About this RNA:
This 177-nucleotide RNA was probed chemically with 2A3 and DMS.
RNA sequence: GGGAACGACUCGAGUAGAGUCGAAAAGACCGUCAGUUAGACGGAAGAAGUGCAUAAAUCCACACCGGAAGACGAGAUAGUGCACAAAUGUGGAUAAGCGUACGGAUCUACGUGCGCUAAACGUGAGCAGUAUUACGUGGUUCGCCACGUAAUACUGAAAAGAAACAACAACAACAAC
Reactivity to 2A3 in 0.01 (KOAc 150mM, MgCl2 10mM, bicine 150mM(pH8.5), 24C), signal-to-noise 8, nucleotides 027 to 126: g110a020c000c000g000u000c000a090g030u080u290a040g000a000c030g060g040a020a020g070a060a020g020u040g000c020a030u070a150a200a040u020c010c010a040c020a030c080c020g070g050a100a080g060a040c050g000a000g010a160u060a090g040u050g030c010a010c010a020a090a040u150g010u070g040g070a050u070a170a030g000c000g010u010a000c020g020g030a050u070c050u170a100c020g000u000g000c000g000c000u010a010a030a000c040g060u090g050a040g030
Reactivity to DMS in 0.01 (KOAc 150mM, MgCl2 10mM, bicine 150mM(pH8.5), 24C), signal-to-noise 7, nucleotides 027 to 126: g020a110c010c000g010u000c000a190g020u040u050a120g000a030c000g000g000a060a070g020a110a120g010u000g000c040a020u010a060a100a080u010c010c030a070c090a170c090c060g010g020a100a090g010a060c110g010a110g010a070u020a120g000u020g000c020a040c040a050a080a090u030g010u010g000g010a100u010a050a050g020c010g020u000a010c010g000g000a150u040c220u050a110c000g020u000g010c000g010c010u000a010a040a050c100g000u010g020a100g000
The reactions ran in a buffer of 150 mM KOAc, 10 mM MgCl2 and 150 mM bicine (pH 8.5), at 24 C. For 2A3, 12,103 sequencing reads were counted. It was measured as part of the RMDB library OK1LIB.